[RMDB]
Chemical mapping of a 177-nucleotide RNA with DMS and 2A3. Values are in units of 0.01, from 0 to 300, in steps of 10.

RNA sequence: GGGAACGACUCGAGUAGAGUCGAAAAGAUAUGGAUCCCUACCCUCUUUUGACGAAGUGUAGUCGGAAACGACUACUCUUCGAUAAGAGGAGGGAUCCUAAGUCAAAGGUCAAGUUCGCUUGACCAAGUUGCUGAUUAGGUUCGCCUAAUCAGCAACAAAAGAAACAACAACAACAAC
Reactivity to DMS in 0.01 (KOAc 150mM, MgCl2 10mM, bicine 150mM(pH8.5), 24C), signal-to-noise 2, nucleotides 027 to 126: g000a010u000a300u010g000g010a000u000c000c000c000u000a230c300c020c000u000c000u000u030u020u000g030a290c130g000a010a020g010u010g000u000a000g000u010c000g010g000a110a120a190c000g010a030c000u010a010c000u000c000u000u000c000g010a090u010a000a010g000a010g030g010a030g020g020g010a000u000c000c000u000a000a080g020u000c000a180a130a090g010g000u010c010a010a000g010u000u000c300g010c000u000u010g020a000c000c010a010a030
Reactivity to 2A3 in 0.01 (KOAc 150mM, MgCl2 10mM, bicine 150mM(pH8.5), 24C), signal-to-noise 3, nucleotides 027 to 126: g020a010u080a030u130g010g000a020u010c000c010c000u120a300c030c020c010u060c040u200u190u160u300g300a270c060g000a010a000g020u010g010u020a000g000u000c000g020g010a070a060a020c020g000a000c010u020a000c000u000c000u000u010c000g010a010u040a050a000g000a000g000g000a020g020g020g000a000u000c000c000u000a040a010g030u020c060a130a090a100g010g010u000c010a000a000g020u030u130c220g030c290u000u010g000a000c000c000a000a010
The reactions ran in a buffer of 150 mM KOAc, 10 mM MgCl2 and 150 mM bicine (pH 8.5), at 24 C. The 2A3 profile rests on 5,143 reads.